[RMDB]
RNA sequence: GGGAACGACUCGAGUAGAGUCGAAAACAACUUUAACACACGUAUAUUCCAUCCUGGGUGCUUAUGGAGGGCCCACGUGCUUGUAUCCGACAGCCACGUAUUUUUUGAUGGGCACUUCUAAAGGAUGCGGUGGCGUAUUAUUCGUAAUACGCCACCGAAAAGAAACAACAACAACAAC
Reactivity to DMS in 0.01 (KOAc 150mM, MgCl2 10mM, bicine 150mM(pH8.5), 24C), signal-to-noise 1, nucleotides 027 to 126: c140a150a230c070u000u030u010a160a040c090a100c180a170c090g000u000a070u060a070u010u020c000c070a010u000c010c020u000g000g000g000u000g000c000u000u020a000u000g040g000a000g000g000g040c100c000c000a060c010g050u000g060c030u050u000g000u000a110u000c080c200g010a110c000a070g000c290c000a060c010g010u010a000u000u010u000u000u010u040g000a130u060g010g000g000c050a100c000u130u000c080u010a080a160a010g000g000a030u000g000
Reactivity to 2A3 in 0.01 (KOAc 150mM, MgCl2 10mM, bicine 150mM(pH8.5), 24C), signal-to-noise 3, nucleotides 027 to 126: c010a010a120c040u170u200u270a220a030c070a020c010a020c120g070u100a100u060a060u190u000c010c010a000u000c000c010u000g000g120g000u080g110c060u210u080a090u300g010g000a000g010g000g000c000c000c000a020c010g000u000g000c020u010u170g040u130a060u090c050c070g130a010c020a000g030c040c020a040c000g010u030a240u030u100u020u030u160u150g170a140u060g010g020g000c000a010c000u010u000c000u070a120a010a000g000g010a010u050g020